Structure probing data (DMS) for a 177-nucleotide construct. Values cover nucleotides 27 to 126. The reactions ran in a buffer of 150 mM KOAc, 10 mM MgCl2 and 150 mM bicine (pH 8.5), at 24 C. The data come from the RNA Mapping Database (RMDB), library M2PK90.
RNA sequence: GGGAACGACUCGAGUAGAGUCGAAAAACAGACCGAAGGGGGGACGGAGAAGGCUAUGUUGGCCGGGCGACGGUUGUCCCGGUUUAAGCGUGUAGGCUGGUUUUCCAGGCAAAUCCGGAAAAAGAAAUAAAGUCACAAUGUUCGCAUUGUGACUUUAAAAAGAAACAACAACAACAAC
Reactivity to DMS in 0.01 (KOAc 150mM, MgCl2 10mM, bicine 150mM(pH8.5), 24C), signal-to-noise 1, nucleotides 027 to 126: a100c140a130g000a080c010c040g000a080a120g000g000g020g000g000g040a100c090g000g010a060g020a090a060g000g010c040u000a060u010g000u000u010g010g010c000c000g000g000g000c300g010a080c130g010g010u010u020g020u000c020c000c010g000g000u010u020u000a050a090g010c030g000u000g030u010a100g020g010c020u000g000g000u000u000u000u000c020c010a100g010g010c110a050a100a140u000c020c010g010g010a040a040a040a040a060g010a070a040a130